An RNA of 177 nucleotides, treated with DMS and 2A3 and read out base by base. It was measured as part of the RMDB library TTRDEL.
RNA sequence: GGGAACGACUCGAGUAGAGUCGAAAAGAUAUGGAGUGAGAAGGGAGCUGGGUCGGAAACGACAUAGCGACGAUCUUCCACUCCUAAGUCAAACUCUUGGGUUACUCUUCGGAGUAACCCAAGAGAAGAACUGUACAAACUUCGGUUUGUACAGUUCAAAAGAAACAACAACAACAAC
Reactivity to DMS in 0.01 (KOAc 150mM, MgCl2 10mM, bicine 150mM(pH8.5), 24C), signal-to-noise 2, nucleotides 027 to 126: g000a020u000a300u020g010g000a020g010u000g020a160g020a010a030g000g010g010a040g030c000u000g010g000g010u000c010g010g000a090a080a150c020g000a030c000a030u010a010g010c010g000a030c240g000a030u010c000u000u000c000c000a010c010u000c000c000u000a000a070g010u000c040a120a150a230c000u010c000u010u000g000g000g000u010u000a020c000u000c010u000u020c250g030g010a020g000u000a000a010c000c000c010a000a000g000a000g010a050a100
Reactivity to 2A3 in 0.01 (KOAc 150mM, MgCl2 10mM, bicine 150mM(pH8.5), 24C), signal-to-noise 2, nucleotides 027 to 126: g040a010u070a030u160g030g000a030g010u010g030a300g040a080a030g000g000g000a010g000c020u040g040g000g020u010c010g010g000a060a050a100c020g000a000c010a010u030a000g000c000g240a300c010g020a030u010c000u000u000c000c000a000c000u000c000c000u000a030a010g020u010c010a090a100a250c020u000c000u000u000g000g000g030u040u020a010c000u000c000u050u090c300g070g000a010g000u000a010a000c000c000c000a010a000g000a000g000a000a000

DMS adducts were read by reverse transcription with MarathonRT. Conditions: 150 mM KOAc, 10 mM MgCl2 and 150 mM bicine (pH 8.5), 24 C.